[RMDB]
RNA sequence: GGGAACGACUCGAGUAGAGUCGAAAACAGUCACUUUCCAGUGUCAUUCCAUGCAGACAAGCGUGUCCUUCAUGAGACAGGAUUCAGUACUGAGCUAGAUCGUGUAAAGAAUCUACCUCAUUGUGAACGGCAGGACUAAGUUCGCUUAGUCCUGCCGAAAAGAAACAACAACAACAAC
Reactivity to DMS in 0.01 (KOAc 150mM, MgCl2 10mM, bicine 150mM(pH8.5), 24C), signal-to-noise 1, nucleotides 027 to 126: c190a110g000u000c070a040c040u000u000u010c190c100a070g040u000g030u010c100a120u000u020c030c030a080u000g010c080a040g020a050c250a070a140g020c100g080u000g010u010c020c030u000u000c100a050u000g010a050g000a020c050a130g010g010a020u000u000c010a080g010u000a040c020u000g020a010g000c200u000a110g020a100u000c040g050u000g040u010a040a110a130g000a010a000u000c000u000a050c220c000u000c020a000u000u020g000u000g010a050a110
Reactivity to 2A3 in 0.01 (KOAc 150mM, MgCl2 10mM, bicine 150mM(pH8.5), 24C), signal-to-noise 1, nucleotides 027 to 126: c020a050g110u040c010a040c080u080u170u050c050c000a020g060u010g000u000c010a000u110u010c030c000a040u070g000c040a030g050a080c020a090a130g050c010g040u080g040u000c030c010u020u090c020a050u130g040a000g030a140c060a100g000g000a040u030u000c010a050g040u000a080c080u030g010a000g000c000u100a040g010a250u090c060g050u050g010u110a060a030a080g000a030a020u000c000u020a040c020c010u010c020a030u020u190g040u070g080a060a010